Chemical mapping of a 177-nucleotide RNA with 2A3 and DMS. For DMS the reverse transcriptase was MarathonRT.
[RMDB]
RNA sequence: GGGAACGACUCGAGUAGAGUCGAAAACUUCAAGCACUGUUUUGGUGUUGUGGCUGAUACUCUUGGGCAGUGUUUUGCACCUCUGAGAGUGGAGUAACUCCUCCUGUGGAGUUGGUCCUAGUCUGGGCAGUAUCUUAUAGUUCGCUAUAAGAUACUGAAAAGAAACAACAACAACAAC
Reactivity to 2A3 in 0.01 (KOAc 150mM, MgCl2 10mM, bicine 150mM(pH8.5), 24C), signal-to-noise 3, nucleotides 027 to 126: c000u090u080c070a060a010g050c000a000c070u060g130u220u180u230u300g060g020u040g000u100u130g100u010g080g030c050u050g000a070u040a150c020u000c010u040u020g010g010g010c060a040g030u010g040u050u130u130u290g020c000a050c010c010u040c030u060g020a040g000a020g060u020g000g010a050g060u030a010a020c010u000c000c020u030c030c080u170g110u180g070g000a000g010u000u000g000g070u000c000c010u000a030g050u000c040u050g050g020g000
Reactivity to DMS in 0.01 (KOAc 150mM, MgCl2 10mM, bicine 150mM(pH8.5), 24C), signal-to-noise 9, nucleotides 027 to 126: c050u010u000c090a110a070g010c030a020c030u000g010u000u000u000u000g010g010u000g010u000u000g020u000g010g010c050u000g010a130u010a070c020u000c030u000u000g000g000g010c150a070g010u000g010u000u010u010u010g010c050a060c020c050u000c030u000g000a030g000a050g020u000g010g010a060g010u000a040a030c020u000c020c010u010c300c190u000g010u000g010g010a030g010u000u000g000g000u000c000c010u000a080g010u000c020u000g010g000g020